[RMDB]
RNA sequence: GGGAACGACUCGAGUAGAGUCGAAAAGUCACUGGAGCUCUUCUUGCACAGGCUGGAUCCUCUCUCUGGGAGCUGCAGGAUAGCUGAGAGACAAAAGACAACCCCAACUGCACAGCCCAGAACUCCAGGAGGGUAACGUAUUCGUACGUUACCCUCCAAAAGAAACAACAACAACAAC
Reactivity to 2A3 in 0.01 (KOAc 150mM, MgCl2 10mM, bicine 150mM(pH8.5), 24C), signal-to-noise 4, nucleotides 027 to 126: g040u050c020a010c100u030g050g030a010g020c010u020c030u110u010c040u060u130g010c050a040c040a060g040g010c000u030g020g070a070u060c000c010u010c010u020c010u000c030u070g050g060g030a060g030c060u020g020c050a020g050g040a110u090a080g010c040u050g010a000g000a020g010a060c060a040a120a000a000g050a030c070a040a110c030c010c000c010a020a100c020u010g000c060a030c000a010g010c010c000c000a040g000a060a050c010u010c060c030a010
Reactivity to DMS in 0.01 (KOAc 150mM, MgCl2 10mM, bicine 150mM(pH8.5), 24C), signal-to-noise 2, nucleotides 027 to 126: g000u000c000a130c030u020g030g000a030g000c030u030c050u020u000c010u030u020g000c000a060c190a090g000g020c080u020g030g000a060u020c080c010u010c060u000c090u050c010u010g020g000g000a120g000c100u000g030c000a030g030g020a030u000a020g000c060u000g000a120g020a040g000a070c080a060a060a110a090g000a090c150a120a060c060c070c010c060a070a040c050u010g000c010a060c080a150g010c010c000c050a060g000a060a170c030u000c000c030a210